[RMDB]
RNA sequence: GGGAACGACUCGAGUAGAGUCGAAAAGCUCUAUCCUUCGGGAUAGAGCAAACGCUACGAUUGACGGUGAACCCGGACCUGAGGUUCAGCAUAGUCGGGCUAAAAGUCACAUGUUCGCAUGUGACAAGCUUUAAUAAUUGUUCGCAAUUAUUAAAGCAAAAGAAACAACAACAACAAC
Reactivity to DMS in 0.01 (KOAc 150mM, MgCl2 10mM, bicine 150mM(pH8.5), 24C), signal-to-noise 8, nucleotides 027 to 126: g010c000u000c000u000a000u000c000c000u000u010c220g030g010g010a010u000a000g010a010g020c010a010a030a040c140g010c020u000a080c020g000a030u000u000g010a080c130g010g000u000g000a010a010c010c000c020g010g010a120c250c170u010g020a090g020g000u000u000c000a030g010c020a090u000a060g010u000c010g000g000g000c010u000a030a060a090a130g000u000c000a000c000a010u000g010u000u010c160g010c000a000u000g010u000g000a000c000a030a060
Reactivity to 2A3 in 0.01 (KOAc 150mM, MgCl2 10mM, bicine 150mM(pH8.5), 24C), signal-to-noise 8, nucleotides 027 to 126: g000c000u000c000u010a010u000c000c010u020u070c200g080g000g010a000u000a000g000a000g000c000a000a000a000c060g000c010u300a160c030g020a020u020u080g140a060c070g060g080u020g000a010a000c020c000c000g050g120a210c070c130u140g070a120g090g000u000u010c000a010g010c000a040u030a040g020u010c000g000g000g000c010u050a080a080a030a090g010u010c000a000c000a010u020g050u050u080c240g020c090a000u000g000u010g000a000c000a010a000
Structure probing data (DMS and 2A3) for a 177-nucleotide construct.
The reactions ran in a buffer of 150 mM KOAc, 10 mM MgCl2 and 150 mM bicine (pH 8.5), at 24 C.
Values are in units of 0.01, from 0 to 300, in steps of 10.